[RMDB]
RNA sequence: GGGAACGACUCGAGUAGAGUCGAAAAGUGUUAGAUAUCUGCAGUAAACCUGAAUCUGUAAUACUAUUGAAUACUUCAUACUAUUCCUUCUCUUUAUGGGAAGGAGAUUGUAAUUUUACUAAAGAUAUGUAAGAUGUGGAUUCGUCCACAUCUUACAAAAAGAAACAACAACAACAAC
Reactivity to DMS in 0.01 (KOAc 150mM, MgCl2 10mM, bicine 150mM(pH8.5), 24C), signal-to-noise 3, nucleotides 027 to 126: g030u010g020u000u000a100g000a110u000a030u020c050u000g020c300a020g000u000a050a060a060c200c120u010g000a050a030u000c020u000g000u010a070a050u020a070c080u000a060u010u010g010a070a180u000a110c160u000u000c040a060u000a040c140u000a110u000u000c000c000u000u000c000u000c000u000u030u000a100u010g020g000g000a020a000g010g000a020g000a020u010u000g010u020a060a090u000u000u010u010a040c040u020a040a230a060g000a040u000a060
Reactivity to 2A3 in 0.01 (KOAc 150mM, MgCl2 10mM, bicine 150mM(pH8.5), 24C), signal-to-noise 1, nucleotides 027 to 126: g020u040g040u060u030a020g020a050u010a020u060c010u010g020c010a010g020u050a040a070a060c030c030u000g030a010a040u120c050u020g040u070a030a080u020a090c010u030a050u070u150g030a060a030u130a130c040u000u080c010a030u000a050c020u040a020u040u080c000c000u030u000c020u000c000u080u230u050a120u270g010g000g000a000a000g000g000a000g020a000u010u050g020u010a090a080u070u010u110u090a020c040u060a070a080a020g010a000u040a020